[RMDB]
RNA sequence: GGGAACGACUCGAGUAGAGUCGAAAAUCCCCAUAGUUCGCUAUGGGGAAAAGCCGUACCGCGUAGCACGCGGAUAGGAGCGAAGAUUUCCACGGCACGCGAAAACCUUCGCCUUCGGGCGAAGGAACAGGGAGUAUUCGUUCGCGAAUACUCCCUGAAAAGAAACAACAACAACAAC
Reactivity to 2A3 in 0.01 (KOAc 150mM, MgCl2 10mM, bicine 150mM(pH8.5), 24C), signal-to-noise 1, nucleotides 027 to 126: u010c010c000c000c000a010u040a000g000u040u000c200g020c060u010a000u010g000g000g000g010a000a010a030a010g060c030c000g030u080a100c010c020g000c010g020u030a030g160c130a030c120g000c050g020g010a020u110a020g110g000a020g000c000g080a090a040g040a300u070u040u060c000c000a010c000g010g030c010a030c060g030c000g080a040a000a060a150c000c000u010u000c010g000c010c020u000u110c230g100g000g000c000g000a000a000g020g000a010a010
Reactivity to DMS in 0.01 (KOAc 150mM, MgCl2 10mM, bicine 150mM(pH8.5), 24C), signal-to-noise 1, nucleotides 027 to 126: u000c000c010c000c020a000u000a000g000u010u000c250g070c000u000a000u000g010g000g010g000a000a000a080a090g020c000c000g060u000a250c040c000g000c000g040u000a120g060c060a300c000g000c000g000g020a140u000a050g000g000a060g020c050g000a050a150g000a240u000u020u020c010c000a080c000g000g000c000a300c070g000c030g000a050a090a070a250c010c000u000u000c000g020c000c000u000u010c200g020g000g040c000g000a010a000g000g000a000a020
The data come from the RNA Mapping Database (RMDB), library M2PK50.
Structure probing data (2A3 and DMS) for a 177-nucleotide construct.
As a SHAPE reagent, 2A3 marks flexible, mostly unpaired nucleotides at the ribose 2'-OH.
For DMS the reverse transcriptase was MarathonRT.
The 2A3 profile rests on 1,313 reads.
The RNA was probed in 150 mM KOAc, 10 mM MgCl2 and 150 mM bicine (pH 8.5) at 24 C.